The record gives the reactivity of an RNA of 207 nucleotides to DMS and 2A3. 2A3 adducts were read by reverse transcription with SuperScript II with manganese. For 2A3, 1,588 sequencing reads were counted. The DMS profile rests on 3,411 reads. Conditions: 150 mM KOAc, 10 mM MgCl2 and 150 mM bicine (pH 8.5), 24 C.

RNA sequence: GGGAACGACUCGAGUAGAGUCGAAAACAACGUGGGCAAUGCCCUGGAGUACGUGUCCAGGAACAUCUUCAAGAGGCCCCUGGGGAGCCGCAUUGAAGAGGGCGUCCCGCAGUUCCUGGUCCUCAUCUCGUCUGGAAAGUCUGACGAUGAGGUGGACACGUUUCCUAUUGUUCGCAAUAGGAAACGUAAAAGAAACAACAACAACAAC
Reactivity to DMS in 0.01 (KOAc 150mM, MgCl2 10mM, bicine 150mM(pH8.5), 24C), signal-to-noise 2, nucleotides 027 to 156: c030a080a090c090g000u000g000g020g030c010a120a130u010g000c040c000c060u010g030g020a110g020u000a060c100g010u000g000u000c000c000a030g000g010a080a040c000a100u000c010u020u010c020a060a020g010a180g020g020c010c010c010c020u000g010g000g000g000a300g010c000c000g000c040a170u000u000g010a060a060g000a080g000g030g020c040g010u010c010c000c000g000c030a220g020u000u000c020c000u000g020g030u000c000c000u010c010a050u000c020u000c000g020u010c020u020g030g000a220a160a210g010u000c060u000g000a030c030g000a020u000g010a030g020g020u010g010g020a130c120
Reactivity to 2A3 in 0.01 (KOAc 150mM, MgCl2 10mM, bicine 150mM(pH8.5), 24C), signal-to-noise 3, nucleotides 027 to 156: c050a020a040c080g060u070g000g000g000c130a180a160u300g000c020c030c020u030g000g070a060g060u120a050c090g030u110g070u070c000c010a010g020g030a020a020c010a070u010c000u030u010c010a030a030g000a060g030g020c020c020c070c100u260g080g050g070g000a010g000c000c010g090c180a120u000u040g010a000a000g000a000g000g040g000c020g040u060c050c000c000g000c020a000g020u010u000c000c020u010g040g030u030c000c010u000c010a050u000c020u010c040g010u020c010u050g030g060a290a190a090g130u120c070u110g030a030c040g010a020u040g000a000g000g020u020g040g000a020c020